[RMDB]
RNA sequence: GGGAACGACUCGAGUAGAGUCGAAAAGAGGAAGAGCCAGGGCUCCUGCAUGCGAAACAACCAAGAAUGAAUUGAAAGUCAAUAACAUACACGACGCCUCUCAUGCAUGGCGGCGUAACGCUCAUGACUGGACAAUCGUGUUCGCACGAUUGUCCAGAAAAGAAACAACAACAACAAC
Reactivity to DMS in 0.01 (KOAc 150mM, MgCl2 10mM, bicine 150mM(pH8.5), 24C), signal-to-noise 1, nucleotides 027 to 126: g000a020g040g010a070a090g000a140g000c030c050a130g000g000g000c000u000c010c000u040g000c030a020u000g000c040g000a040a090a050c080a090a070c040c030a050a080g040a230a030u000g010a130a090u040u010g010a070a050a130g000u000c010a000a010u000a110a130c090a070u000a120c180a010c090g000a010c000g000c020c000u000c040u000c120a020u030g000c090a080u000g000g050c000g000g000c100g010u000a040a090c100g010c040u000c100a150u000g000a130
Reactivity to 2A3 in 0.01 (KOAc 150mM, MgCl2 10mM, bicine 150mM(pH8.5), 24C), signal-to-noise 1, nucleotides 027 to 126: g120a050g120g000a040a000g010a010g050c020c080a080g000g110g090c000u010c040c000u060g030c000a040u010g000c040g070a090a000a090c040a040a010c000c030a000a060g040a030a120u170g030a000a020u110u040g020a060a070a030g070u040c000a040a040u100a150a000c030a060u150a080c060a000c100g030a000c030g000c000c010u000c010u010c010a010u050g000c020a010u080g020g060c010g010g000c040g060u070a030a000c040g060c010u040c050a090u150g100a090
This 177-nucleotide RNA was probed chemically with DMS and 2A3.
For DMS, 625 sequencing reads were counted.
The RNA was probed in 150 mM KOAc, 10 mM MgCl2 and 150 mM bicine (pH 8.5) at 24 C.
The 2A3 profile rests on 874 reads.
Source: RMDB library OK2TRN, as collected in RNAgym.